[RMDB]
RNA sequence: GGGAACGACUCGAGUAGAGUCGAAAACGGACACCGAACCACCUCGUCCUCGGCGGCCGCCGAGAUACGAGCCAAUUCGCUGCGGCCGAUCUCAAUACGGCAGGCACCGCAACGGUGGCCCUGCAACGCUACUCAUCAGCUUCGGCUGAUGAGUAGCAAAAGAAACAACAACAACAAC
Reactivity to 2A3 in 0.01 (KOAc 150mM, MgCl2 10mM, bicine 150mM(pH8.5), 24C), signal-to-noise 3, nucleotides 027 to 126: c010g010g020a020c000a020c000c020g000a000a010c000c000a030c040c000u010c000g000u000c000c000u010c000g010g020c040g090g110c120c230g010c000c000g020a020g000a000u110a020c000g010a000g000c010c020a030a060u040u030c020g010c030u030g050c070g120g020c000c000g020a110u000c000u000c000a060a170u240a150c070g030g000c010a010g020g000c020a000c000c020g100c160a140a110c150g000g010u000g020g030c010c000c000u040g010c020a080a050c060
Reactivity to DMS in 0.01 (KOAc 150mM, MgCl2 10mM, bicine 150mM(pH8.5), 24C), signal-to-noise 1, nucleotides 027 to 126: c090g010g040a000c000a000c000c000g000a000a050c130c080a210c300c000u000c000g020u000c090c000u000c000g030g060c000g000g000c300c300g000c050c080g020a000g080a030u020a000c090g000a000g000c180c080a090a120u000u000c050g000c080u000g000c060g000g100c100c000g060a150u130c020u020c020a080a020u020a150c000g000g000c000a000g000g000c020a000c000c000g000c200a140a200c190g000g030u000g000g000c080c030c000u020g000c050a180a000c010

An RNA of 177 nucleotides, treated with 2A3 and DMS and read out base by base. For 2A3, 2,393 sequencing reads were counted. Conditions: 150 mM KOAc, 10 mM MgCl2 and 150 mM bicine (pH 8.5), 24 C. Source: RMDB library OK1LIB, as collected in RNAgym. For DMS the reverse transcriptase was MarathonRT. High 2A3 reactivity points to a flexible backbone, as in loops and unpaired stretches.